[RMDB]
The record gives the reactivity of an RNA of 207 nucleotides to 2A3 and DMS. For DMS the reverse transcriptase was MarathonRT.
RNA sequence: GGGAACGACUCGAGUAGAGUCGAAAAGUGAUACCUAGUGGAAAUGCCUUUAGUGACUAUUGAUUUCGACUUAGGACAAGUUCUACGGUUGUGGCCUUUCCCGCCGCAACCCCGACAUCUAAAUUUUCUGUCCGCAUUAGUGCCUAGUUCUGGACAAGAUCGUAAAAUCAUUCGUGAUUUUACGAUCAAAAGAAACAACAACAACAAC
Reactivity to 2A3 in 0.01 (KOAc 150mM, MgCl2 10mM, bicine 150mM(pH8.5), 24C), signal-to-noise 6, nucleotides 027 to 156: g070u050g050a040u090a140c010c010u030a030g020u030g090g030a040a050a040u080g070c030c000u100u100u070a150g040u130g120a100c060u050a070u120u110g050a050u030u040u050c060g030a030c020u050u120a050g020g010a050c050a120a060g010u070u040c040u100a050c060g000g000u000u010g000u010g000g000c000c000u040u040u010c000c010c000g000c000c000g000c000a000a000c000c000c000c030g070a040c020a090u070c060u250a090a150a160u120u070u070u040c040u040g020u020c000c000g000c020a020u030u110a060g070u060g090c000c000u010a020g020u030u050c020u060g010g010a010c020a050a040
Reactivity to DMS in 0.01 (KOAc 150mM, MgCl2 10mM, bicine 150mM(pH8.5), 24C), signal-to-noise 2, nucleotides 027 to 156: g020u000g020a150u000a170c010c000u000a140g010u000g020g010a070a110a080u000g030c040c020u000u010u000a170g030u000g020a100c030u000a200u000u010g010a170u000u000u010c000g000a090c030u000u000a090g030g020a070c050a030a170g040u000u000c020u000a110c070g020g020u010u000g010u000g020g010c020c060u000u010u020c100c040c040g000c020c000g020c020a020a020c010c000c040c050g000a060c060a070u010c040u000a040a070a230u000u000u000u010c060u010g020u010c000c020g020c070a180u000u000a100g030u000g010c030c020u000a140g020u000u000c050u000g000g010a100c060a080a150